[RMDB]
Annotation:
Chemical mapping of a 177-nucleotide RNA with 2A3 and DMS. DMS adducts were read by reverse transcription with MarathonRT. Values cover nucleotides 27 to 126.
RNA sequence: GGGAACGACUCGAGUAGAGUCGAAAAGAUAUGGACCCAUGUAGCAUCGAUCUACUGUGUCGGAAACGACAUGUAGGGAGCUGACAUGGGUCCUAAGUCAAAAGUACUUCAGUUCGCUGAAGUACAAGAUAAUGCGACAGUUCGCUGUCGCAUUAUCAAAAGAAACAACAACAACAAC
Reactivity to 2A3 in 0.01 (KOAc 150mM, MgCl2 10mM, bicine 150mM(pH8.5), 24C), signal-to-noise 2, nucleotides 027 to 126: g010a000u000a000u070g000g010a010c010c010c010a010u010g020u020a000g000c020a040u300c110g020a010u010c020u010a000c030u110g040u000g000u070c000g000g000a000a010a000c000g000a010c010a020u040g000u020a000g000g010g010a030g000c010u030g010a030c000a000u000g000g000g000u000c000c000u000a000a000g000u000c000a000a000a000a070g000u000a000c000u000u000c000a020g100u030u150c280g090c160u000g000a000a000g010u000a000c000a000a000
Reactivity to DMS in 0.01 (KOAc 150mM, MgCl2 10mM, bicine 150mM(pH8.5), 24C), signal-to-noise 3, nucleotides 027 to 126: g020a020u000a050u010g000g000a020c000c000c000a010u000g020u010a020g020c000a300u000c230g000a020u020c010u000a010c000u000g040u000g000u000c010g030g000a010a010a030c010g020a010c000a010u000g030u000a010g000g000g000a010g030c000u000g000a020c000a010u000g010g010g020u000c000c000u000a000a080g000u000c010a100a100a160a170g000u000a010c000u000u010c010a000g010u000u010c280g010c010u000g010a010a010g020u000a000c000a060a070